RNA sequence: GGGAACGACUCGAGUAGAGUCGAAAAAUGCAGGAUAUAUUAAGAAUAAAGAUGAAGCAUCUGAGGCCAACUCAGCUGGUCAAUUAAUUUCUAAGAUAAUUGGCUGGGAAGAUAUAGUGCCUGUUGACAGGAUGAAUUGAUUCGUCAAUUCAUCCUGAAAAGAAACAACAACAACAAC
Reactivity to 2A3 in 0.01 (KOAc 150mM, MgCl2 10mM, bicine 150mM(pH8.5), 24C), signal-to-noise 1, nucleotides 027 to 126: a000u080g050c000a000g000g030a010u000a000u010a020u100u160a100a060g050a090a080u220a150a290a040g080a070u070g090a220a000g030c020a030u000c000u050g030a000g080g000c190c060a050a090c040u000c020a000g000c000u020g020g000u040c020a030a000u010u070a070a110u060u150u060c120u200a080a050g030a050u030a100a000u050u000g000g050c060u030g050g000g030a030a040g010a030u050a000u020a030g150u130g070c040c000u040g000u040u060g010a010
Reactivity to DMS in 0.01 (KOAc 150mM, MgCl2 10mM, bicine 150mM(pH8.5), 24C), signal-to-noise 2, nucleotides 027 to 126: a070u010g030c020a000g010g000a120u000a000u000a010u000u000a060a150g000a160a070u010a100a090a100g000a110u000g000a180a120g020c090a060u000c040u010g000a040g010g000c120c180a120a120c010u000c020a030g010c020u000g000g000u000c020a010a010u000u000a040a080u000u000u000c180u020a080a060g000a040u000a020a000u000u000g000g000c020u000g000g000g030a110a090g000a040u000a020u000a020g000u000g010c010c010u000g000u000u000g010a160

Record summary: This 177-nucleotide RNA was probed chemically with 2A3 and DMS. For 2A3, 841 sequencing reads were counted.